Structure probing data (DMS) for a 177-nucleotide construct.
[RMDB]
RNA sequence: GGGAACGACUCGAGUAGAGUCGAAAAAUAAUCCGCAGGAUAUUGGGCAGUUCUUCCUCGAUUUAGGCGUGGGUACCUGUAUCUUUAAAGCCGGAUCGCAAGGGUCUUAUGUGAUAAGUUCGCACCAGAGGGCUAUUUAAUUCGUUAAAUAGCCCUCAAAAGAAACAACAACAACAAC
Reactivity to DMS in 0.01 (KOAc 150mM, MgCl2 10mM, bicine 150mM(pH8.5), 24C), signal-to-noise 2, nucleotides 027 to 126: a100u010a110a040u000c000c000g010c120a070g000g020a050u000a080u010u000g000g020g040c040a080g000u000u000c060u000u010c020c040u000c070g000a080u000u000u010a080g020g020c050g000u000g010g010g030u010a020c020c130u000g030u010a020u000c030u000u030u010a060a090a190g020c090c050g010g020a030u000c020g000c160a050a100g000g010g000u010c030u010u000a060u030g000u000g000a090u000a030a080g010u000u010c050g000c110a060c090c110a060

Record summary: Conditions: 150 mM KOAc, 10 mM MgCl2 and 150 mM bicine (pH 8.5), 24 C. Source: RMDB library OK2TRN, as collected in RNAgym. Values cover nucleotides 27 to 126. Reactivities are rounded to 0.1 and cut off at 0 and 3. The DMS profile rests on 1,463 reads.